[RMDB]
RNA sequence: GGGAACGACUCGAGUAGAGUCGAAAAGAGCGGCAGAGGGACUGGCCCGAUGAAGCCCGGCAACCUAACUUUAUUUAAGCGUAAAGUGAAGGUGCUAAUUCCAGCAAAAUGGUGUAAUCCGUUUUGGUUUAUCCGCCCUGGUUCGCCAGGGCGGAAAGUAGAAUCUUUGAUUCGUCAAAGAUUCUACAAAAGAAACAACAACAACAAC
Reactivity to DMS in 0.01 (KOAc 150mM, MgCl2 10mM, bicine 150mM(pH8.5), 24C), signal-to-noise 2, nucleotides 027 to 156: g000a070g020c030g040g060c010a060g000a220g010g050g020a130c020u000g000g040c030c010c000g000a130u020g010a110a200g000c000c010c020g000g000c010a040a040c000c000u000a140a020c000u000u000u000a000u020u000u010a140a220g020c300g000u000a000a000a020g040u000g010a070a050g020g000u000g000c000u000a050a120u000u000c010c020a160g020c040a010a020a050a040u010g010g030u000g030u000a130a110u000c020c010g010u000u000u000u000g000g010u000u000u000a120u010c010c000g000c070c000c020u000g010g010u010u010c300g020c020c010a020g000g020g000c000g000g000a000a000a080
Reactivity to 2A3 in 0.01 (KOAc 150mM, MgCl2 10mM, bicine 150mM(pH8.5), 24C), signal-to-noise 2, nucleotides 027 to 156: g070a010g000c260g000g000c000a010g000a010g030g000g000a010c010u000g020g030c020c020c010g030a080u000g000a000a000g000c000c000c000g000g000c030a070a100c000c000u000a020a020c000u000u010u040a050u060u160u110a190a040g090c040g030u000a000a000a010g000u010g070a130a010g010g000u000g000c000u000a000a050u110u020c000c000a000g040c020a010a020a010a030u080g010g010u090g030u230a080a110u070c000c010g030u000u010u010u040g030g020u030u110u080a030u020c000c000g000c000c000c000u010g000g030u070u080c140g040c090c010a010g000g010g000c000g000g000a010a000a000